[RMDB]
RNA sequence: GGGAACGACUCGAGUAGAGUCGAAAAGCAGUUUCACUCACGAUACACUCUUGAGGAAGAGUGUCAGUAUUGCUUCCUCAAGCAAUACAUUACGGUAUGCCAAUACUGUAAUUGACAGCAGAUUGGCAUCUGCUGUAUCUCAUGAAACUGGUGAGUCCUCGUGCCUGCCUUUCGAGGCAGGCACGAGAAAAGAAACAACAACAACAAC
Reactivity to 2A3 in 0.01 (KOAc 150mM, MgCl2 10mM, bicine 150mM(pH8.5), 24C), signal-to-noise 2, nucleotides 027 to 156: g080c000a000g000u000u000u010c020a000c060u080c040a070c070g020a020u020a010c000a000c050u060c010u040u180g140a110g070g110a030a010g000a000g010u000g000u000c000a010g000u000a020u020u050g000c010u020u030c010c030u110c070a010a000g030c000a000a000u000a070c020a020u000u010a010c000g000g000u020a000u060g170c030c010a030a020u000a020c000u000g010u030a020a040u060u140g020a010c030a000g000c000a000g030a040u060u060g100g040c040a010u000c000u030g000c000u000g000u010a030u000c040u020c030a080u080g000a000a000a000c010u020g030g070u110g050a020g150u050c010